[RMDB]
RNA sequence: GGGAACGACUCGAGUAGAGUCGAAAAGAUAUGGAGCGUGUGGAUGAACUACUCCCGUGGCUCGGAAACGAGCCAUAGGGAGCAUCGUAACAUCACGCUCCUAAGUCAAACGACGGUUCGCCGUCGACGGUAGCUCGAAGUUCGCUUCGAGCUACCGAAAAGAAACAACAACAACAAC
Reactivity to 2A3 in 0.01 (KOAc 150mM, MgCl2 10mM, bicine 150mM(pH8.5), 24C), signal-to-noise 2, nucleotides 027 to 126: g060a020u070a040u140g020g000a000g020c020g000u020g050u090g170g070a110u020g000a090a100c050u230a140c000u300c000c000c000g000u010g000g020c000u010c000g010g000a100a150a020c040g000a000g000c030c000a010u040a050g010g040g000a010g030c000a000u020c000g070u100a120a100c040a130u210c000a010c000g000c000u000c010c000u000a020a030g000u030c060a080a040a040c000g040a000c010g000g000u100u050c300g030c120c040g030u010c020g000a070
Reactivity to DMS in 0.01 (KOAc 150mM, MgCl2 10mM, bicine 150mM(pH8.5), 24C), signal-to-noise 1, nucleotides 027 to 126: g000a070u000a300u010g020g000a000g040c020g060u000g040u000g030g030a030u000g010a080a080c070u030a220c000u010c000c000c000g010u000g000g010c010u020c000g000g020a180a070a230c000g000a000g020c000c000a030u000a080g030g000g000a000g000c070a000u000c030g010u010a170a160c040a030u000c030a020c000g010c000u000c000c000u000a010a090g060u000c070a070a130a240c140g000a010c060g000g020u040u010c230g010c000c000g010u010c000g010a050